[RMDB]
RNA sequence: GGGAACGACUCGAGUAGAGUCGAAAAAAACCGACAGUGCACGUUGACGUAGACCCCCAAAGUCCGUUUGUGCUACAACUGCAGAAGAGUUUCCCACAAUUCGAGAUUGUGGCUCAGCAGGUCACUCCCUUAUGAGCAACUUCGGUUGCUCAUAAGGAAAAGAAACAACAACAACAAC
Reactivity to 2A3 in 0.01 (KOAc 150mM, MgCl2 10mM, bicine 150mM(pH8.5), 24C), signal-to-noise 5, nucleotides 027 to 126: a010a000a000c050c010g030a060c060a050g040u050g050c020a000c050g070u090u130g010a010c010g020u090a060g070a060c030c000c000c000c030a080a000a000g020u020c020c010g000u050u090u110g020u020g040c000u050a030c030a090a060c010u010g010c030a040g040a260a000g010a070g010u050u120u070c030c030c000a030c020a010a070u120u140c070g040a010g020a260u050u030g010u000g010g020c020u010c030a020g000c030a010g010g020u020c010a010c030u050c020
Reactivity to DMS in 0.01 (KOAc 150mM, MgCl2 10mM, bicine 150mM(pH8.5), 24C), signal-to-noise 3, nucleotides 027 to 126: a080a060a030c030c010g010a090c080a100g040u000g000c010a010c030g020u030u000g020a050c100g030u040a080g000a100c030c000c010c110c070a080a060a130g020u030c020c020g000u000u020u010g010u020g020c000u010a060c130a100a120c030u010g020c020a060g000a060a010g010a140g000u030u000u000c060c000c010a100c090a090a120u020u000c170g000a080g020a120u010u000g000u000g000g000c020u000c050a110g000c040a140g030g000u000c040a080c070u000c080